[RMDB]
RNA sequence: GGGAACGACUCGAGUAGAGUCGAAAACGUACGUGUUUUCACGUACGACGAGACUUUUGUCUCGGAUUGAGCCAACAUACAGGGCUCCCAUGCGAGGCGAUUGUCCUUAUUGUUCGGAUUGUCGCUUCUUCUCGUAUGGUACAACAGACUGUAUGGAAUUAGUGCCAUAGUUCGCUAUGGCACUAAUAAAAGAAACAACAACAACAAC
Reactivity to 2A3 in 0.01 (KOAc 150mM, MgCl2 10mM, bicine 150mM(pH8.5), 24C), signal-to-noise 5, nucleotides 027 to 156: c020g000u010a000c000g010u030g060u040u130u120u300c010a000c000g000u020a000c000g010a010c010g000a000g000a000c020u110u210u300u300g010u010c010u010c010g010g020a090u090u140g040a020g030c000c010a030a040c000a110u010a000c000a000g040g010g060c020u020c060c010c010a000u010g000c000g000a000g030g000c000g000a010u030u050g020u000c040c020u200u190a250u120u300g150u190u210c080g000g000a010u000u040g000u010c020g000c000u140u110c010u160u050c010u000c000g000u010a000u000g000g000u060a050c030a030a010c010a000g130a060c010u010g010u020a000u000g020g010a050
Reactivity to DMS in 0.01 (KOAc 150mM, MgCl2 10mM, bicine 150mM(pH8.5), 24C), signal-to-noise 3, nucleotides 027 to 156: c030g030u000a000c010g050u000g010u000u000u000u000c020a000c010g020u000a000c000g000a060c010g000a070g000a040c000u000u000u000u000g030u000c000u000c000g020g000a120u010u000g010a140g030c030c010a120a090c030a030u000a020c010a030g000g010g010c010u010c060c010c020a040u000g020c020g040a050g020g010c010g010a030u000u010g020u000c000c000u010u000a130u000u000g020u000u010c230g020g010a040u000u000g010u010c010g000c010u000u010c060u000u010c040u000c010g020u000a010u000g000g020u000a100c060a100a150c120a120g000a240c000u000g030u000a010u000g010g000a170